[RMDB]
RNA sequence: GGGAACGACUCGAGUAGAGUCGAAAAUCACCAGAUGCUGCAUCACCUGAUCACUGAUGGCUCAAUGGUAUCCGGCGGUACAACUGAAUACUUGUAGCUGCCUUUUGAGCGGGUUGGCUGCAAUCCGAAAAGAGGACACACUUCGGUGUGUCCUCAACUACAACUGUCCGUUCGCGGACAGUUGUAGAAAAGAAACAACAACAACAAC
Reactivity to 2A3 in 0.01 (KOAc 150mM, MgCl2 10mM, bicine 150mM(pH8.5), 24C), signal-to-noise 1, nucleotides 027 to 156: u060c000a000c000c000a020g030a110u080g080c090u050g000c000a030u030c050a040c030c010u040g060a040u050c060a000c080u110g020a060u100g100g000c010u060c030a070a060u110g010g000u090a080u010c020c020g060g000c090g020g000u080a070c030a100a090c100u110g060a100a060u060a120c010u040u000g000u030a010g070c030u040g000c000c000u080u060u010u040g020a000g050c030g020g020g000u100u150g050g000c020u050g030c030a040a130u050c010c020g020a020a020a050a050g030a000g010g010a000c010a000c000a020c010u030u110c180g050g000u000g000u000g080u000c000c000u000c000a000a000